[RMDB]
RNA sequence: GGGAACGACUCGAGUAGAGUCGAAAAAAGGUCCCAAGGGUCCGGCUGUUCGCCGGUUAAAGCGGCACGCGAGCUGGGUUCAGAACGUCGCGAGACAGUUCGGUCCUCUAUCCUCUGUGGGCGUUGGAAGUACUUGUCAUUUCGAUGACAAGUACUUAAAAGAAACAACAACAACAAC
Reactivity to DMS in 0.01 (KOAc 150mM, MgCl2 10mM, bicine 150mM(pH8.5), 24C), signal-to-noise 3, nucleotides 027 to 126: a100a040g020g000u010c010c010c000a170a100g020g000g010u000c010c010g000g000c010u000g000u000u000c200g020c000c010g000g000u010u010a020a070a220g000c050g020g000c020a270c070g020c040g010a050g010c050u000g000g010g000u020u040c060a040g010a070a080c140g010u000c000g000c070g020a300g000a030c000a030g020u000u010c020g000g020u000c030c000u000c060u000a080u030c060c010u020c110u000g020u010g000g000g000c140g010u040u000g010g000
Reactivity to 2A3 in 0.01 (KOAc 150mM, MgCl2 10mM, bicine 150mM(pH8.5), 24C), signal-to-noise 2, nucleotides 027 to 126: a000a000g040g000u000c000c000c000a020a010g020g020g000u050c010c000g000g000c020u000g030u150u100c100g000c040c030g010g000u000u030a010a000a000g180c000g030g010c010a000c050g040c050g050a110g000c030u080g050g090g170u240u240c000a000g010a050a030c020g100u010c000g000c010g010a010g030a010c000a000g000u180u300c010g050g000u020c020c000u000c000u000a210u120c060c010u040c020u040g000u060g090g000g020c060g000u000u010g020g100